[RMDB]
An RNA of 177 nucleotides, treated with DMS and 2A3 and read out base by base.
Conditions: 150 mM KOAc, 10 mM MgCl2 and 150 mM bicine (pH 8.5), 24 C.

RNA sequence: GGGAACGACUCGAGUAGAGUCGAAAAAGAGCAGCACCGCGCCGCUGAUGGCCAACGCGGACAGUCGGUCGCUGAUCGAGGCGAUCAUGGAGGAAGUCAUCGGUGCUGCCGGCGCCUGCGGCUUCAAUCAUAUCCCGUAGUUCGCUACGGGAUAUGAAAAAGAAACAACAACAACAAC
Reactivity to DMS in 0.01 (KOAc 150mM, MgCl2 10mM, bicine 150mM(pH8.5), 24C), signal-to-noise 5, nucleotides 027 to 126: a080g010a190g010c000a010g010c010a010c010c010g020c140g030c000c020g020c020u010g000a040u000g020g020c040c030a060a260c150g010c060g010g020a140c070a100g020u010c120g020g010u000c030g000c010u010g010a090u000c250g010a130g010g010c020g010a020u000c020a090u010g010g000a140g000g010a200a070g010u000c040a030u010c090g000g020u000g000c020u010g000c010c040g010g000c110g020c060c030u010g010c030g020g020c030u000u000c090a070a190
Reactivity to 2A3 in 0.01 (KOAc 150mM, MgCl2 10mM, bicine 150mM(pH8.5), 24C), signal-to-noise 3, nucleotides 027 to 126: a010g030a000g000c000a000g010c000a010c010c010g020c040g010c020c000g010c020u040g000a060u050g010g000c020c010a080a040c060g050c040g120g100a030c030a020g170u220c080g040g000u020c030g000c030u020g000a030u230c110g010a170g010g010c010g020a010u040c010a070u140g090g030a070g010g040a100a000g010u020c000a010u030c050g000g010u030g000c010u010g010c010c000g050g000c030g050c010c040u030g000c000g030g040c030u130u150c080a050a050

For DMS, 4,684 sequencing reads were counted.